[RMDB]
RNA sequence: GGGAACGACUCGAGUAGAGUCGAAAACGUCCGAUGCGGAAGUUCGUGCUUCCGUCGAACGCGAAAGUCGGACGGCGGCCAUGAGUCGCAACGCAAAGCCGCGGCAAGUGGGGUUAGCGAGAAGAGAAAAAGUCACGAGUGUUCGCACUCGUGACAACAUAUCGCAAAGCUUCGGCUUUGCGAUAUGAAAAGAAACAACAACAACAAC
Reactivity to DMS in 0.01 (KOAc 150mM, MgCl2 10mM, bicine 150mM(pH8.5), 24C), signal-to-noise 2, nucleotides 027 to 156: c040g010u010c010c010g020a000u000g020c020g000g000a050a020g000u000u010c300g050u010g000c020u000u000c000c030g030u000c060g000a040a060c050g020c060g010a100a030a120g010u010c000g000g020a050c020g020g020c090g020g000c000c030a150u020g010a300g000u000c020g050c020a020a010c030g010c010a120a140a200g060c000c020g040c050g030g030c050a080a270g000u020g010g000g000g000u000u000a130g020c030g020a090g000a090a060g000a110g000a060a060a080a080a100g000u010c000a010c020g000a020g040u010g000u010u000c300g000c000a020c010u010c010g020u000g000a000c000a030a060
Reactivity to 2A3 in 0.01 (KOAc 150mM, MgCl2 10mM, bicine 150mM(pH8.5), 24C), signal-to-noise 5, nucleotides 027 to 156: c010g000u000c000c010g000a020u040g010c010g020g010a030a020g010u180u300c130g160u300g080c000u010u000c000c000g000u010c000g010a170a010c070g010c030g110a130a020a020g030u010c000g000g010a010c010g020g000c010g000g020c010c010a120u180g030a030g050u020c000g010c030a050a070c030g000c060a130a130a030g040c030c040g020c020g030g020c080a100a050g030u050g020g010g010g020u130u090a040g030c030g020a030g030a140a030g070a040g060a050a060a010a020a030g000u000c000a000c000g000a010g010u030g040u040u080c180g030c090a000c000u000c000g000u000g000a000c000a000a000
Structure probing data (DMS and 2A3) for a 207-nucleotide construct.
Values cover nucleotides 27 to 156.
For 2A3 the reverse transcriptase was SuperScript II with manganese.
It was measured as part of the RMDB library M2RFPK.
For 2A3, 3,031 sequencing reads were counted.
Conditions: 150 mM KOAc, 10 mM MgCl2 and 150 mM bicine (pH 8.5), 24 C.